RNA sequence: GGGAACGACUCGAGUAGAGUCGAAAACAAAAAGGAUAACGUCGCUUCAGUUAAAGUAAGAUCUGACUUUUGGUUUACUAGAGUUGAAGGUGAACGAACUCCUUCAAUGAAAACUUCAAUCGUUGAAGCUAUUGCUAAUGACCGUGAGCAAGCUAAGCGAACAACCUCCGUUCGCGGAGGUUGUUCGAAAAGAAACAACAACAACAAC
Reactivity to 2A3 in 0.01 (KOAc 150mM, MgCl2 10mM, bicine 150mM(pH8.5), 24C), signal-to-noise 1, nucleotides 027 to 156: c020a000a020a000a000a070g100g000a060u180a040a080c070g040u060c030g030c070u010u010c010a060g020u060u080a090a030a000g000u040a060a120g020a120u020c020u060g170a220c100u210u140u110u110g060g020u040u050u020a050c040u000a000g050a010g120u000u000g000a000a000g020g180u020g000a050a020c020g000a060a020c020u000c000c100u010u000c000a090a100u090g020a030a060a000a000c020u100u100c030a010a140u060c140g020u010u000g020a010a010g000c000u040a030u030u250g000c010u100a090a000u100g060a090c040c010g070u100g000a010g000c000a000a000g000c020u060a030a000g020
The data come from the RNA Mapping Database (RMDB), library OK3TST. The record gives the reactivity of an RNA of 207 nucleotides to 2A3. Reactivities are rounded to 0.1 and cut off at 0 and 3. Values cover nucleotides 27 to 156.